[RMDB]
RNA sequence: GGGAACGACUCGAGUAGAGUCGAAAAGGAAAGGCCACAACCCGCGCACCCCAGCCCCGAUCCGGCGGGCAGCCACUCAACCCGAACCAGCACCCAAGAGCGAUCCCUGGGGGACCCCCAAACCGCACACUUGUUGCUGUUUCGACAGCAACAAGUGAAAAGAAACAACAACAACAAC
Reactivity to 2A3 in 0.01 (KOAc 150mM, MgCl2 10mM, bicine 150mM(pH8.5), 24C), signal-to-noise 2, nucleotides 027 to 126: g070g010a100a050a050g040g010c030c000a050c030a040a060c000c000c030g000c000g000c020a050c010c000c020c020a010g000c000c010c000c010g010a100u130c050c010g020g020c000g010g050g000c010a030g030c010c020a030c000u020c020a060a110c000c020c010g030a020a030c000c000a010g020c010a060c000c010c000a040a010g040a000g040c030g020a040u020c000c000c000u000g030g030g000g000g040a070c000c000c000c000c030a050a070a040c030c010g080c030a040
Reactivity to DMS in 0.01 (KOAc 150mM, MgCl2 10mM, bicine 150mM(pH8.5), 24C), signal-to-noise 1, nucleotides 027 to 126: g040g000a120a190a110g000g000c000c000a070c050a090a080c010c010c020g000c040g000c160a110c000c000c010c050a080g010c060c000c030c050g000a050u010c140c030g000g020c040g000g020g050c010a060g000c000c030a000c110u020c070a070a080c020c020c010g000a050a140c020c020a050g010c080a050c010c010c030a070a130g020a090g020c040g050a070u000c020c000c040u000g050g000g000g010g040a080c060c010c000c000c010a060a060a110c140c010g000c270a120